[RMDB]
RNA sequence: GGGAACGACUCGAGUAGAGUCGAAAAUGGACUUUUUACAGUUCCUACUUAGCCGGUUUUAACGCUGUUUUAUUGGCGCAAAGGUUUACGGAUAAACAACUAAUAAUUAAACCUUUUGUGUGCGAAAAUUGGACGUUUAGGUUCGCCUAAACGUCAAACAUACUAACGAGUUCGCUCGUUAGUAUGUAAAAGAAACAACAACAACAAC
Reactivity to DMS in 0.01 (KOAc 150mM, MgCl2 10mM, bicine 150mM(pH8.5), 24C), signal-to-noise 4, nucleotides 027 to 156: u010g010g020a090c070u000u000u020u010u010a110c090a130g010u000u000c000c030u000a090c070u000u000a040g000c010c010g010g000u010u030u000u010a150a100c040g020c000u000g020u000u000u000u000a110u010u030g020g020c010g020c010a030a050a050g030g020u000u010u000a150c070g010g020a090u000a070a080a210c070a070a200c090u020a080a140u000a110a160u000u000a010a020a020c000c000u000u000u000u000g020u000g020u000g010c010g010a050a050a070a210u000u000g020g010a020c010g030u000u000u000a000g000g020u000u000c300g030c010c000u010a000a010a010c010g010u000c000a010a040
Reactivity to 2A3 in 0.01 (KOAc 150mM, MgCl2 10mM, bicine 150mM(pH8.5), 24C), signal-to-noise 6, nucleotides 027 to 156: u100g040g020a030c040u040u080u060u100u200a080c140a040g020u100u080c000c000u030a070c030u090u140a030g060c020c020g070g030u060u020u040u110a080a030c040g010c040u020g110u050u130u060u090a130u120u140g030g000c000g000c030a000a020a010g010g010u000u010u010a020c030g050g030a100u190a190a160a030c060a060a010c080u150a060a150u140a150a040u160u090a020a010a010c000c000u000u080u090u120g060u010g030u060g050c030g060a030a050a070a120u120u100g120g000a000c000g000u000u000u000a010g030g010u020u020c150g080c010c000u000a000a000a000c000g000u000c000a000a000